RNA sequence: GGGAACGACUCGAGUAGAGUCGAAAAGAUAUGGAUCCACUACCAGCUUGGAUUUAUGGCUGUUUGCACGGUCGGAAACGACCGUGUGAUAGCCAUUGUCAGCUGAUGUGGAUCCUAAGUCAAAACCAAUCAUAGGACUUCGGUCCUAUGAUUGGAACACUACUCCCCGCUUCGGCGGGGAGUAGUGAAAAGAAACAACAACAACAAC
Reactivity to 2A3 in 0.01 (KOAc 150mM, MgCl2 10mM, bicine 150mM(pH8.5), 24C), signal-to-noise 1, nucleotides 027 to 156: g000a000u090a030u120g000g000a000u000c000c000a020c010u080a130c000c030a010g000c060u140u170g260g040a110u300u300u050a020u060g000g010c000u010g050u130u060u080g000c000a020c000g010g000u000c000g020g060a160a060a050c010g000a000c020c050g020u010g010u000g000a010u000a010g000c000c010a000u000u000g000u000c000a000g000c000u000g030a000u000g000u000g010g000a000u010c000c000u020a010a010g000u010c010a030a000a000a170c000c010a000a000u010c000a010u000a000g010g000a000c000u060u050c300g030g000u010c000c000u000a000u000g000a000u000u000g000g010a000a000